[RMDB]
RNA sequence: GGGAACGACUCGAGUAGAGUCGAAAAGCAGAAGUACUGCUCCAGUUGUCACUGGACCUCCCCAGAGUAAACUGCCUUUUGAUGACCAGGGCGAAUUGAGUGAAAUCGUCAUGGACAGAUACGGGGCAACAUGGUAUUAAUUCGUUAAUACCAUGUUAAAAGAAACAACAACAACAAC
Reactivity to DMS in 0.01 (KOAc 150mM, MgCl2 10mM, bicine 150mM(pH8.5), 24C), signal-to-noise 9, nucleotides 027 to 126: g010c010a010g000a200a190g030u020a130c010u000g010c010u000c010c000a020g010u000u020g010u020c210a130c010u000g000g000a140c050c030u000c010c000c000c030a130g010a160g010u020a040a080a090c120u010g010c000c000u000u000u010u000g010a210u000g010a080c010c010a020g000g010g000c000g010a030a060u000u010g010a170g020u020g010a070a070a070u000c000g020u000c000a040u000g000g000a140c010a020g000a180u010a040c140g000g000g000g000c030
Reactivity to 2A3 in 0.01 (KOAc 150mM, MgCl2 10mM, bicine 150mM(pH8.5), 24C), signal-to-noise 9, nucleotides 027 to 126: g000c010a000g020a210a020g190u150a120c010u000g010c000u010c000c000a030g030u100u170g230u230c120a010c030u010g000g020a030c000c020u040c000c000c000c010a060g060a020g100u180a060a120a090c070u060g010c000c000u060u070u060u080g090a050u030g010a030c000c000a010g000g020g000c030g020a110a130u130u130g080a120g140u210g110a060a060a060u010c000g000u000c000a020u010g000g000a030c000a010g020a010u050a060c090g010g000g000g000c000
Notes:
Source: RMDB libraries RFM100 and RFMREP, as collected in RNAgym. Chemical mapping of a 177-nucleotide RNA with DMS and 2A3. Reactivities are given for positions 27 through 126.